The record gives the reactivity of an RNA of 177 nucleotides to 2A3 and DMS. Conditions: 150 mM KOAc, 10 mM MgCl2 and 150 mM bicine (pH 8.5), 24 C.
[RMDB]
RNA sequence: GGGAACGACUCGAGUAGAGUCGAAAAGCCAUUCCCAUCGAGUCUUUCAGCCCUCUCGCUCAGAGCACGGCGCCUCCCCCACAGUUCUCCGAUUCCAGUUUUCCCGUAAAGGAAUGUCCUUGGUGGCCCUACAGUGCGGAUUCGUCCGCACUGUAGGAAAAGAAACAACAACAACAAC
Reactivity to 2A3 in 0.01 (KOAc 150mM, MgCl2 10mM, bicine 150mM(pH8.5), 24C), signal-to-noise 4, nucleotides 027 to 126: g070c030c030a020u030u040c000c020c000a000u030c070g030a040g050u020c000u000u070u050c040a040g010c010c010c000u000c010u020c030g060c010u060c050a010g010a020g060c030a000c030g030g000c010g050c020c000u020c020c000c000c010c000a040c010a020g010u030u030c020u000c040c010g040a090u060u060c040c010a010g010u060u040u020u000c000c010c010g030u090a080a020a010g060g030a080a070u090g050u050c020c040u020u030g090g000u060g100g000c000
Reactivity to DMS in 0.01 (KOAc 150mM, MgCl2 10mM, bicine 150mM(pH8.5), 24C), signal-to-noise 2, nucleotides 027 to 126: g000c080c080a250u010u010c000c010c000a110u000c080g000a120g000u000c020u000u000u000c060a070g020c010c010c000u010c010u020c010g010c040u010c040a080g020a150g000c070a070c070g000g020c060g000c030c010u000c020c000c000c000c020a080c070a060g010u010u000c040u020c030c010g020a100u010u010c010c040a100g010u020u000u000u000c000c000c000g010u010a060a020a090g010g010a090a100u010g010u000c030c010u000u020g030g010u030g020g000c040
As a SHAPE reagent, 2A3 marks flexible, mostly unpaired nucleotides at the ribose 2'-OH. It was measured as part of the RMDB libraries RFM100 and RFMREP.